This 207-nucleotide RNA was probed chemically with 2A3. It was measured as part of the RMDB library M2RFPK. Values cover nucleotides 27 to 156. For 2A3 the reverse transcriptase was SuperScript II with manganese.

[RMDB]
RNA sequence: GGGAACGACUCGAGUAGAGUCGAAAAGUGAAAGCUCCUUCUCUCGCAAUGUGUAACUCAUGAUUCUCAUGACCCCUGGUUGGAGAGAUCCGGACUAGGAGUCAGGGGGCCUCUGAUUCUGCCAGCCAAAACUGUCGUAAGUUCGCUUACGACAGAAGUGCAGGAAAUACUUCGGUAUUUCCUGCACAAAAGAAACAACAACAACAAC
Reactivity to 2A3 in 0.01 (KOAc 150mM, MgCl2 10mM, bicine 150mM(pH8.5), 24C), signal-to-noise 2, nucleotides 027 to 156: g070u090g020a110a010a010g030c020u040c000c000u030u110c030u000c010u020c020g070c100a080a180u090g000u020g040u100a030a050c020u040c040a060u100g080a150u140u050c040u030c050a080u060g030a030c000c000c000c000u010g030g000u000u000g010g000a020g020a010g030a070u020c000c030g110g010a020c010u020a010g010g010a010g010u000c010a010g000g000g000g020g000c000c000u020c040u060g050a070u070u000c020u050g050c030c000a030g050c010c000a110a080a100a110c020u000g000u000c000g000u000a000a000g000u020u060c110g020c120u000u000a000c000g000a010c000a000g000a010a010